[RMDB]
RNA sequence: GGGAACGACUCGAGUAGAGUCGAAAAGCAUCCCGCUUCGGCGGGAUGCAAAAGCGAUCGUGUCAUUGCCUCGAACGCAACUCAAAUAAUGAUGGGCAGUGAAAAGUCUGGGCUUCGGCCCAGACAACAUAUAGCACGCGUUCGCGCGUGCUAUAUGAAAAGAAACAACAACAACAAC
Reactivity to 2A3 in 0.01 (KOAc 150mM, MgCl2 10mM, bicine 150mM(pH8.5), 24C), signal-to-noise 2, nucleotides 027 to 126: g010c000a010u030c000c010c030g090c030u070u080c130g120g000c030g010g010g000a020u010g000c010a010a010a010a000g010c010g000a040u040c030g020u030g110u200c020a010u010u030g000c000c020u030c020g030a020a010c020g000c010a030a090c030u060c080a070a080a120u220a070a170u240g120a050u110g000g010g000c000a000g020u020g000a000a100a030a030g000u020c010u000g010g000g010c000u010u090c240g110g000c020c000c000a000g000a000c000a000a000
Reactivity to DMS in 0.01 (KOAc 150mM, MgCl2 10mM, bicine 150mM(pH8.5), 24C), signal-to-noise 1, nucleotides 027 to 126: g000c020a010u000c000c000c000g010c010u010u020c090g040g020c000g050g000g000a010u000g030c000a000a020a140a180g010c010g000a050u010c000g040u010g030u020c010a020u000u000g010c030c000u000c050g000a040a260c010g010c010a120a110c050u000c010a070a090a080u020a060a080u000g010a110u020g000g000g030c000a010g010u000g000a100a150a010a120g000u000c000u000g000g000g000c000u000u000c180g050g000c000c010c000a000g010a010c010a050a050
Source information: Chemical mapping of a 177-nucleotide RNA with 2A3 and DMS. It was measured as part of the RMDB library M2PK50. The DMS profile rests on 985 reads. High 2A3 reactivity points to a flexible backbone, as in loops and unpaired stretches. High DMS reactivity at an A or C suggests that its Watson-Crick edge is free.